[RMDB]
RNA sequence: GGGAACGACUCGAGUAGAGUCGAAAAGACGAUCACUAGAGUCAUGGAUCUGAUCCGAUCUCCAUGAGCUGCUAGUGACAUGACUGGUACGCUCUGAUCCAUGCACUAGAGUACGCCAUGAGGUACGCGCAUUCAGACGGUUCGCCGUCUGAAUGCGAAAAGAAACAACAACAACAAC
Reactivity to 2A3 in 0.01 (KOAc 150mM, MgCl2 10mM, bicine 150mM(pH8.5), 24C), signal-to-noise 2, nucleotides 027 to 126: g090a010c060g020a160u050c020a010c000u000a000g000a010g060u040c010a000u000g000g050a030u020c110u100g070a150u020c060c080g010a090u040c020u000c060c030a000u020g020a020g130c020u230g070c010u000a020g010u050g000a030c040a040u120g080a030c010u040g030g000u040a010c230g000c020u000c000u030g020a030u070c020c070a090u180g060c080a040c010u070a040g000a000g030u030a050c130g010c050c000a060u120g040a070g080g120u130a050c080g050
Reactivity to DMS in 0.01 (KOAc 150mM, MgCl2 10mM, bicine 150mM(pH8.5), 24C), signal-to-noise 2, nucleotides 027 to 126: g000a160c100g000a140u010c020a060c000u000a000g000a030g000u000c000a030u000g000g000a050u010c090u000g000a070u000c120c060g000a040u000c110u000c010c050a010u000g000a060g000c030u010g000c010u000a020g000u010g010a090c090a020u000g000a160c080u000g010g020u000a210c150g000c040u000c020u000g000a050u010c080c060a120u000g030c180a140c070u000a040g010a050g000u000a150c040g030c020c000a040u020g000a120g010g040u000a100c150g100
Source information
The data come from the RNA Mapping Database (RMDB), library OK2TRN. The record gives the reactivity of an RNA of 177 nucleotides to 2A3 and DMS. DMS adducts were read by reverse transcription with MarathonRT.